[RMDB]
RNA sequence: GGGAACGACUCGAGUAGAGUCGAAAAGAUAUGGAGCCUGGAUAGCGAUGAGAUCACGUUUCGGAAACGAAAUGAUCGAGCUACAGGCUCCUAAGUCAAAACCAUAGAGUCUUCGGACUCUAUGGAACAUGUAAGGGGAGUUCGCUCCCCUUACAUGAAAAGAAACAACAACAACAAC
Reactivity to 2A3 in 0.01 (KOAc 150mM, MgCl2 10mM, bicine 150mM(pH8.5), 24C), signal-to-noise 3, nucleotides 027 to 126: g010a010u000a000u050g020g000a000g000c020c000u050g190g150a300u150a080g000c050g210a300u250g020a100g000a000u000c010a020c300g090u020u040u030c000g000g000a000a000a000c010g000a000a010a020u020g000a000u000c000g010a020g000c020u010a020c000a000g000g000c000u000c000c000u000a000a000g000u000c000a050a040a000a130c000c000a000u000a000g000a000g000u000c030u100u200c300g100g000a000c000u000c000u000a010u000g000g000a000a040
Reactivity to DMS in 0.01 (KOAc 150mM, MgCl2 10mM, bicine 150mM(pH8.5), 24C), signal-to-noise 4, nucleotides 027 to 126: g000a010u000a010u000g000g000a010g010c000c000u000g020g010a230u000a010g020c000g010a240u020g000a170g020a000u000c010a040c300g010u000u010u000c000g020g000a010a020a030c000g010a010a020a080u000g010a010u000c010g010a010g010c010u000a100c010a000g000g010c000u000c000c000u000a000a080g000u010c010a100a090a110a290c010c000a010u000a010g000a020g010u000c000u000u010c300g030g010a020c000u000c000u000a000u000g000g000a050a100

The record gives the reactivity of an RNA of 177 nucleotides to 2A3 and DMS. It was measured as part of the RMDB library TTRDES. For DMS, 4,946 sequencing reads were counted.